[RMDB]
RNA sequence: GGGAACGACUCGAGUAGAGUCGAAAAUUAAGUCAUGGAUGAGUGGUAUUAUAGGUAUAGGAUUAUAUCUAUCUUUAUUGGACAAUAAAACCAAUUCAUUUGAGAUUUUAGAUUAUCUCAUCAACUCCUAAUAGUUUCCAUUCGUGGAAACUAUUAGAAAAGAAACAACAACAACAAC
Reactivity to DMS in 0.01 (KOAc 150mM, MgCl2 10mM, bicine 150mM(pH8.5), 24C), signal-to-noise 4, nucleotides 027 to 126: u010u000a030a050g030u000c020a070u000g010g000a010u000g000a030g030u010g000g010u000a060u000u010a040u000a010g000g000u000a010u000a020g010g010a160u010u000a010u000a020u000c010u000a010u010c130u000u000u000a050u010u000g000g010a100c120a060a050u000a030a040a100a090c010c000a020a060u010u000c050a030u000u010u000g010a100g000a020u000u010u000u000a080g010a090u010u000a090u000c010u000c010a110u010c160a040a100c170u010c110
Reactivity to 2A3 in 0.01 (KOAc 150mM, MgCl2 10mM, bicine 150mM(pH8.5), 24C), signal-to-noise 3, nucleotides 027 to 126: u060u010a040a000g040u010c020a040u130g030g010a030u030g020a010g040u040g020g010u050a060u170u070a010u090a010g000g010u010a010u020a030g050g110a030u230u090a020u030a010u020c000u010a020u010c040u050u130u040a130u040u070g040g040a050c050a050a060u070a060a050a010a010c030c010a020a140u070u030c020a020u020u030u070g050a080g010a010u010u060u000u140a040g010a060u100u070a030u050c000u010c010a020u040c020a030a080c030u050c030